[RMDB]
RNA sequence: GGGAACGACUCGAGUAGAGUCGAAAAGAUAUGGAAUUCGUAAGAGACGAUGAAAGGUUUCGGAAACGAAACCUGGAGUCUAUUACGAGAUUCCUAAGUCAAAGGUCGUGACUUCGGUCACGACCAAGAUAAUACCGUCGUUCGCGACGGUAUUAUCAAAAGAAACAACAACAACAAC
Reactivity to DMS in 0.01 (KOAc 150mM, MgCl2 10mM, bicine 150mM(pH8.5), 24C), signal-to-noise 3, nucleotides 027 to 126: g000a060u000a300u010g010g000a040a100u000u010c010g010u000a000a000g000a050g010a010c020g000a140u020g000a170a130a030g020g000u000u000u000c000g010g010a070a080a160c000g000a000a000a000c000c000u000g000g000a050g020u000c000u010a080u000u000a010c000g000a060g020a070u000u000c000c000u010a020a180g000u000c050a080a150a140g010g010u000c000g020u000g000a020c010u000u010c260g030g010u000c010a010c010g010a000c010c000a020a030
Reactivity to 2A3 in 0.01 (KOAc 150mM, MgCl2 10mM, bicine 150mM(pH8.5), 24C), signal-to-noise 2, nucleotides 027 to 126: g010a010u060a050u180g020g000a000a000u080u000c000g020u000a010a020g070a010g010a090c030g300a300u050g000a030a010a000g000g000u010u010u010c000g010g000a070a040a050c010g000a010a000a000c000c000u010g030g010a000g000u060c000u000a000u010u000a000c020g020a030g080a060u030u030c000c000u000a070a000g070u040c070a090a090a130g000g000u000c000g000u000g000a000c000u060u080c300g110g000u010c000a010c000g000a000c000c000a010a000

Chemical mapping of a 177-nucleotide RNA with DMS and 2A3.
High 2A3 reactivity points to a flexible backbone, as in loops and unpaired stretches.
2A3 adducts were read by reverse transcription with SuperScript II with manganese.
The data come from the RNA Mapping Database (RMDB), library TTRDES.